[RMDB]
RNA sequence: GGGAACGACUCGAGUAGAGUCGAAAAUACUUCCAUUGUCAUGUGUAUGUUGGGGAUUAAACCCUGAUUGAGUUCAGCCCACAUACUUUGUUGAUUGGUUGUCAAUCAUGGCAAAAGUGCACGCUACACAUCAGUCGACAUUCGUGUCGACUGAUGUAAAAGAAACAACAACAACAAC
Reactivity to 2A3 in 0.01 (KOAc 150mM, MgCl2 10mM, bicine 150mM(pH8.5), 24C), signal-to-noise 3, nucleotides 027 to 126: u090a060c010u070u040c000c000a050u020u010g010u000c010a000u010g060u010g040u020a000u030g190u210u110g080g000g020g000a050u160u290a090a080a060c020c010c000u020g020a030u020u090g060a120g300u070u010c010a060g080c000c000c000a010c000a000u000a000c000u060u130u120g030u010u010g000a080u050u080g160g070u050u080g000u050c010a030a040u000c000a010u000g000g000c000a020a010a050a020g110u080g080c100a030c150g060c030u110a050c030
Reactivity to DMS in 0.01 (KOAc 150mM, MgCl2 10mM, bicine 150mM(pH8.5), 24C), signal-to-noise 2, nucleotides 027 to 126: u040a120c150u000u000c000c070a300u010u020g020u010c030a010u000g010u000g030u010a000u000g010u030u010g010g000g010g010a220u030u010a050a100a120c130c300c010u030g000a040u020u010g010a100g010u000u000c020a040g000c000c010c000a000c020a030u010a020c010u020u000u010g010u000u000g000a050u000u010g030g010u060u000g000u000c010a040a010u000c000a040u000g000g010c000a010a030a070a110g000u010g000c140a110c150g000c040u020a160c150